Notes
The data come from the RNA Mapping Database (RMDB), library OK1LIB. Structure probing data (DMS and 2A3) for a 177-nucleotide construct. For 2A3, 442 sequencing reads were counted. The RNA was probed in 150 mM KOAc, 10 mM MgCl2 and 150 mM bicine (pH 8.5) at 24 C. Values cover nucleotides 27 to 126.
RNA sequence: GGGAACGACUCGAGUAGAGUCGAAAAUGCCAAACCGGCAUAAAGAUAAAUUGCUGGGUGAACGAUUAAGACUGGCGUUGCAAGAGCUGGGACCGGUCUGGAUCAAAUUUGGUCAGAUGCUCUCCACAUUUAAUGGACGCUUCGGCGUCCAUUAAAUAAAAGAAACAACAACAACAAC
Reactivity to DMS in 0.01 (KOAc 150mM, MgCl2 10mM, bicine 150mM(pH8.5), 24C), signal-to-noise 1, nucleotides 027 to 126: u000g000c050c030a050a040a140c070c010g000g010c000a030u000a010a030a100g000a240u020a000a130a060u000u000g030c050u030g010g000g000u000g030a160a150c190g000a090u030u000a070a030g030a030c010u010g010g000c110g040u000u050g010c030a110a060g000a030g030c030u000g000g000g010a050c030c000g000g000u010c000u000g010g000a060u000c020a030a140a190u000u010u020g000g050u010c050a000g000a090u000g010c100u000c030u010c000c090a120c170
Reactivity to 2A3 in 0.01 (KOAc 150mM, MgCl2 10mM, bicine 150mM(pH8.5), 24C), signal-to-noise 1, nucleotides 027 to 126: u080g000c000c000a030a000a010c060c040g000g000c010a010u080a020a120a000g090a040u190a200a110a030u170u010g010c000u000g030g070g040u100g100a000a000c080g020a070u050u110a040a000g000a000c000u020g040g000c160g120u040u100g000c000a030a200g010a010g180c020u040g000g060g120a070c000c000g000g000u000c000u090g010g010a000u000c000a020a080a190u160u140u000g020g040u050c010a010g000a040u120g100c040u000c000u090c000c010a040c000